[RMDB]
RNA sequence: GGGAACGACUCGAGUAGAGUCGAAAACCGUCUGACACGCCGGCCCCCGCCGGCGCCGACGGUGCCUCCAAGGUCGACCCUCCAGCUCGUCUCUCCCCGUCGUCACCUACCUCUCUCUGUCACUCGCCGUACAUCAAUUGUUCGCAAUUGAUGUACGAAAAGAAACAACAACAACAAC
Reactivity to DMS in 0.01 (KOAc 150mM, MgCl2 10mM, bicine 150mM(pH8.5), 24C), signal-to-noise 2, nucleotides 027 to 126: c010c010g000u010c020u010g050a110c180a130c050g010c000c020g020g020c000c050c120c200c270g000c010c010g020g030c000g010c060c060g000a000c010g020g020u000g000c010c010u000c040c050a100a120g000g000u000c040g000a180c060c010c010u000c020c010a060g030c030u000c050g000u000c000u000c050u010c050c030c020c060g000u000c070g020u010c030a080c030c010u000a080c070c020u010c010u000c010u000c030u010g020u010c070a100c010u000c060g020c130
An RNA of 177 nucleotides, treated with DMS and read out base by base.
Reactivities are given for positions 27 through 126.
For DMS, 1,351 sequencing reads were counted.
The reactions ran in a buffer of 150 mM KOAc, 10 mM MgCl2 and 150 mM bicine (pH 8.5), at 24 C.
The data come from the RNA Mapping Database (RMDB), library RFMREP.